[RMDB]
RNA sequence: GGGAACGACUCGAGUAGAGUCGAAAAACCUCGAUCAGAGCUCUCUGAUCGACACUAGAGAGCUGCUGAGGUCAGACGAGAGUCUGACCUUUGAGCACAGGCCUGUGUUCAACAGUGGAGGCCUAGUGUCCUCACACGAGAGUGUGAGGAGGUAAAACGUAUCUACCUAGUUCGCUAGGUAGAUACGAAAAGAAACAACAACAACAAC
Reactivity to 2A3 in 0.01 (KOAc 150mM, MgCl2 10mM, bicine 150mM(pH8.5), 24C), signal-to-noise 3, nucleotides 027 to 156: a010c000c000u000c010g000a000u000c000a000g030a050g080c070u030c030u000c000u170g000a000u000c000g000a000c000a000c010u070a060g020a000g010a010g120c040u060g010c020u040g070a020g020g000u010c000a000g000a000c010g050a030g010a030g140u000c000u000g000a000c000c000u000u010u010g000a010g050c000a000c000a000g140g210c080c280u060g010u000g020u010u020c020a040a030c010a050g030u060g030g150a040g130g030c000c000u000a000g000u000g000u000c010c000u000c000a000c000a000c020g070a050g010a020g090u000g000u000g000a010g000g000a000g000g010u010a030a030a000a000
Reactivity to DMS in 0.01 (KOAc 150mM, MgCl2 10mM, bicine 150mM(pH8.5), 24C), signal-to-noise 2, nucleotides 027 to 156: a080c000c000u020c000g030a020u000c010a050g010a090g000c160u000c100u000c000u010g000a030u000c000g010a050c010a030c030u000a030g010a110g000a120g040c020u010g020c010u000g020a080g030g030u000c000a000g020a020c000g000a300g000a300g030u000c000u010g010a010c000c000u000u000u010g020a050g010c010a030c030a050g000g000c210c070u010g030u010g030u000u020c000a080a300c070a000g020u010g000g000a010g000g000c060c010u000a040g000u000g020u000c000c000u000c010a010c000a000c000g030a260g010a300g010u000g020u010g010a000g000g020a010g020g030u010a010a030a080a170